[RMDB]
RNA sequence: GGGAACGACUCGAGUAGAGUCGAAAAGAAGGUGGGUCAGGGCUCGGACCGCACCUAUUAGAUGUAACUAUUUCGAGCCCAUUAAUGGCGUUUUCGCCUAGGUCAGAGCACGCCGUGGCUCGACCCAAAUAAAUAAAUAAUAGCACGGCGGAUAGAAGGCUACUAUAUACUUCGGUAUAUAGUAGCCAAAAGAAACAACAACAACAAC
Reactivity to 2A3 in 0.01 (KOAc 150mM, MgCl2 10mM, bicine 150mM(pH8.5), 24C), signal-to-noise 2, nucleotides 027 to 156: g060a000a000g010g000u010g000g010g000u000c000a000g000g020g000c000u010c000g000g000a000c010c030g100c050a010c010c020u010a130u020u080a030g050a050u150g090u200a100a040c090u120a260u110u130u090c000g000a000g010c000c000c000a000u010u060a080a050u040g000g000c000g110u040u040u240u300c030g040c000c000u000a010g000g000u020c100a160g000a000g000c000a000c010g000c010c000g000u000g010g010c000u000c000g000a000c020c020c020a100a110a100u130a030a080a010u190a030a110a000u120a080a030u060a050g000c010a000c000g000g000c120g000g000a060u090a030g120a120a050

About this RNA:
The record gives the reactivity of an RNA of 207 nucleotides to 2A3. It was measured as part of the RMDB library OK3TST. Conditions: 150 mM KOAc, 10 mM MgCl2 and 150 mM bicine (pH 8.5), 24 C.